About this RNA
Conditions: 150 mM KOAc, 10 mM MgCl2 and 150 mM bicine (pH 8.5), 24 C. An RNA of 177 nucleotides, treated with DMS and 2A3 and read out base by base. For 2A3 the reverse transcriptase was SuperScript II with manganese. The 2A3 profile rests on 2,668 reads.
[RMDB]
RNA sequence: GGGAACGACUCGAGUAGAGUCGAAAAGAAGCACUUCGUCGAGGUGAUUUCUCGUUAUGACGAACUUGUAGAGAUGCUCGUUCAACAACAUGAGGACGACGCUACUGCGAUGAAGGGAUUGCUUCAGACACUUUGGCGUAUUCGUACGCCAAAGUGUAAAAGAAACAACAACAACAAC
Reactivity to DMS in 0.01 (KOAc 150mM, MgCl2 10mM, bicine 150mM(pH8.5), 24C), signal-to-noise 3, nucleotides 027 to 126: g010a030a030g020c000a050c000u020u010c020g000u000c020g010a190g010g000u000g000a280u000u000u000c010u000c000g010u020u000a290u000g000a030c300g000a010a030c020u030u000g010u000a020g020a270g010a120u000g000c010u000c060g020u000u000c000a050a300c090a060a060c180a030u000g020a100g020g000a030c170g020a100c120g010c050u000a060c070u000g000c010g020a020u000g010a030a030g000g010g010a100u020u000g020c010u010u000c000a090g000
Reactivity to 2A3 in 0.01 (KOAc 150mM, MgCl2 10mM, bicine 150mM(pH8.5), 24C), signal-to-noise 3, nucleotides 027 to 126: g010a000a000g000c010a000c020u000u000c010g000u020c010g020a020g030g070u080g020a090u000u050u050c010u000c010g080u110u040a080u160g060a030c050g020a020a030c030u050u040g030u040a020g030a040g030a130u080g030c020u000c010g020u010u000c040a060a090c030a040a010c010a070u160g010a030g030g020a010c070g040a060c050g060c050u160a100c040u060g120c020g020a010u020g020a010a020g040g030g090a120u090u240g010c000u000u000c010a000g020